Chemical mapping of a 177-nucleotide RNA with DMS and 2A3. 2A3 adducts were read by reverse transcription with SuperScript II with manganese. The data come from the RNA Mapping Database (RMDB), libraries RFM100 and RFMREP. The reactions ran in a buffer of 150 mM KOAc, 10 mM MgCl2 and 150 mM bicine (pH 8.5), at 24 C.
RNA sequence: GGGAACGACUCGAGUAGAGUCGAAAAUGAAACCGUAUGUCUACAAAGUGUCAGAGCAGAGCAAUCUGCGAUGGCGUGCCUUUUGUUUAAUGAGUCUGCGAGUCAGUGUUUGUGGCAAGACUAAGGGAUCCGGAAAUAUAUUCGUAUAUUUCCGGAUAAAAGAAACAACAACAACAAC
Reactivity to DMS in 0.01 (KOAc 150mM, MgCl2 10mM, bicine 150mM(pH8.5), 24C), signal-to-noise 9, nucleotides 027 to 126: u030g010a100a100a130c030c030g000u010a050u030g010u010c040u000a070c110a030a060a090g020u020g000u000c020a030g000a300g000c000a010g000a020g000c300a080a110u010c010u000g000c010g000a120u000g000g000c010g010u020g000c090c030u000u010u010u020g000u010u010u010a070a090u010g010a080g000u000c010u000g010c050g000a080g000u010c030a050g010u010g000u010u010u000g030u010g000g000c030a060a030g000a040c040u010a080a100g000g010g000
Reactivity to 2A3 in 0.01 (KOAc 150mM, MgCl2 10mM, bicine 150mM(pH8.5), 24C), signal-to-noise 7, nucleotides 027 to 126: u200g040a060a010a000c010c000g040u110a050u230g060u000c010u020a090c040a050a110a020g100u110g010u060c010a000g000a000g000c000a000g000a000g010c030a030a140u000c000u000g000c000g000a010u010g000g000c000g020u030g030c010c000u120u110u070u070g130u100u120u150a130a100u130g020a020g130u050c020u040g010c060g090a040g090u100c030a030g030u030g070u160u160u170g110u100g020g010c040a060a020g010a020c020u020a030a050g050g010g040